Source: RMDB libraries RFM100 and RFMREP, as collected in RNAgym. An RNA of 177 nucleotides, treated with 2A3 and DMS and read out base by base. The RNA was probed in 150 mM KOAc, 10 mM MgCl2 and 150 mM bicine (pH 8.5) at 24 C.
RNA sequence: GGGAACGACUCGAGUAGAGUCGAAAAAACAGCAUCUGUUGCAACUCACAGUCUGGGGCAUCAAGCAGCUCCAGGCAAGAGUCCUGGCUGUGGAAAGAUACCUAAAGGAUCAACAGCUCCUGGGAAUGUCGUAUACAAAAUUCGUUUUGUAUACGACAAAAGAAACAACAACAACAAC
Reactivity to 2A3 in 0.01 (KOAc 150mM, MgCl2 10mM, bicine 150mM(pH8.5), 24C), signal-to-noise 7, nucleotides 027 to 126: a000a000c040a040g020c030a070u080c080u080g070u140u060g020c020a040a050c010u000c010a050c070a050g010u000c000u010g000g010g000g000c020a090u040c110a210a070g090c090a030g000c040u000c000c000a000g000g000c000a000a020g000a000g020u020c010c020u020g020g000c000u000g000u060g040g000a080a090a030g060a050u220a170c010c020u100a130a120a030g030g000a030u030c000a020a030c010a030g020c030u010c010c010u060g010g020g040a060a080u070
Reactivity to DMS in 0.01 (KOAc 150mM, MgCl2 10mM, bicine 150mM(pH8.5), 24C), signal-to-noise 7, nucleotides 027 to 126: a070a000c010a010g000c000a160u010c020u000g020u000u000g010c170a110a050c010u000c010a070c260a300g000u000c000u000g000g010g000g000c000a120u040c150a090a170g040c300a130g010c000u000c010c000a010g000g020c000a060a090g000a010g020u010c050c040u000g000g010c000u010g000u000g000g010a060a060a060g000a140u020a100c010c010u000a090a070a060g010g000a090u020c010a070a050c080a060g000c150u000c000c000u010g010g010g000a110a120u010
Reactivities are given for positions 27 through 126. For 2A3 the reverse transcriptase was SuperScript II with manganese. In probing experiments dimethyl sulfate is read out at A N1 and C N3, which are open when not base-paired.